Notes
Chemical mapping of a 207-nucleotide RNA with 2A3 and DMS. The reactions ran in a buffer of 150 mM KOAc, 10 mM MgCl2 and 150 mM bicine (pH 8.5), at 24 C. For DMS, 2,628 sequencing reads were counted. Reactivities are given for positions 27 through 156. For 2A3 the reverse transcriptase was SuperScript II with manganese.
RNA sequence: GGGAACGACUCGAGUAGAGUCGAAAAGCGCGAGACCGGCAAGGUGUGGCCUGACCCGGGCGGUCAGAUGCCCUCGGCGAAGUCGCACGGUAUCGCUGACCAGCUGAUGGUCGACACUCCGGACUGGUGGAGGAACUACGCCCACAAAGGCGACCUGAUACUGCUGUUAGUUCGCUAACAGCAGUAUAAAAGAAACAACAACAACAAC
Reactivity to 2A3 in 0.01 (KOAc 150mM, MgCl2 10mM, bicine 150mM(pH8.5), 24C), signal-to-noise 3, nucleotides 027 to 156: g060c040g000c010g020a020g010a050c000c000g000g050c110a090a060g050g020u030g030u090g040g010c010c130u030g020a040c020c020c000g050g120g010c120g030g020u050c040a030g020a050u140g020c000c000c040u050c020g000g030c050g010a150a070g150u140c030g000c050a070c030g040g000u060a030u070c050g030c060u080g010a040c020c020a020g060c070u160g050a120u100g050g010u020c010g040a030c020a010c040u030c000c000g100g050a090c040u060g040g010u040g020g020a020g010g020a020a000c030u090a020c050g000c000c010c010a170c040a060a140a020g030g000c000g010a040c000c030u050g020
Reactivity to DMS in 0.01 (KOAc 150mM, MgCl2 10mM, bicine 150mM(pH8.5), 24C), signal-to-noise 2, nucleotides 027 to 156: g070c060g050c000g020a090g020a060c000c010g000g010c110a170a160g020g020u000g040u000g030g020c060c000u000g010a090c120c000c060g000g020g050c100g020g020u000c020a090g040a170u000g020c040c000c010u020c010g000g060c010g000a110a180g010u000c000g000c030a070c040g020g010u000a070u000c110g040c040u010g030a090c000c000a190g020c070u000g010a200u000g030g000u010c000g030a100c050a110c060u000c030c010g000g030a250c050u000g000g000u000g000g000a140g000g010a080a110c040u000a080c060g000c020c010c020a170c100a070a130a130g000g000c040g020a090c040c020u040g000